[RMDB]
RNA sequence: GGGAACGACUCGAGUAGAGUCGAAAAAGCACCUCGCAAUGAGGUAAGGUGGGACUUUUCCUUCUGGAACCAAGCGGUUGGUUCCGAGGGGGGUGUGACUCAGGUACCGCCGUAGAAACUGAGUUACGACGUCUACCCGGGAUUCAAACCCGGUCCCCUUAUAAUCAGCGUUCGCGCUGAUUAUAAGAAAAGAAACAACAACAACAAC
Reactivity to DMS in 0.01 (KOAc 150mM, MgCl2 10mM, bicine 150mM(pH8.5), 24C), signal-to-noise 1, nucleotides 027 to 156: a130g020c090a060c010c010u020c000g020c130a200a140u000g000a060g030g020u010a010a000g040g020u000g030g000g010a070c050u000u000u000u010c000c000u000u000c010u020g110g000a010a030c000c000a000a080g030c210g040g000u010u010g000g020u010u010c000c010g010a040g050g000g000g050g020g040u000g070u020g000a050c020u010c010a030g000g020u010a100c090c000g040c050c170g000u010a030g020a080a170a170c050u020g000a090g000u000u000a130c000g030a050c020g000u000c040u010a020c050c000c000g030g000g000a200u010u000c130a100a100a150c060c000c020g030g010u000c010c000c020
Reactivity to 2A3 in 0.01 (KOAc 150mM, MgCl2 10mM, bicine 150mM(pH8.5), 24C), signal-to-noise 3, nucleotides 027 to 156: a000g030c010a000c000c000u000c000g120c150a160a300u300g000a010g030g010u030a030a070g070g030u110g020g020g040a030c030u100u090u060u020c000c000u000u040c140u240g000g000a000a000c000c000a020a020g080c050g070g110u030u030g000g000u000u000c000c010g000a020g000g030g000g000g030g010u100g000u010g000a010c010u000c000a010g010g010u010a010c000c010g050c020c040g060u070a050g090a060a240a010c010u020g000a000g010u020u000a010c040g030a020c020g060u010c020u030a040c000c020c000g010g040g000a080u300u260c110a100a030a110c020c000c000g020g070u060c010c000c000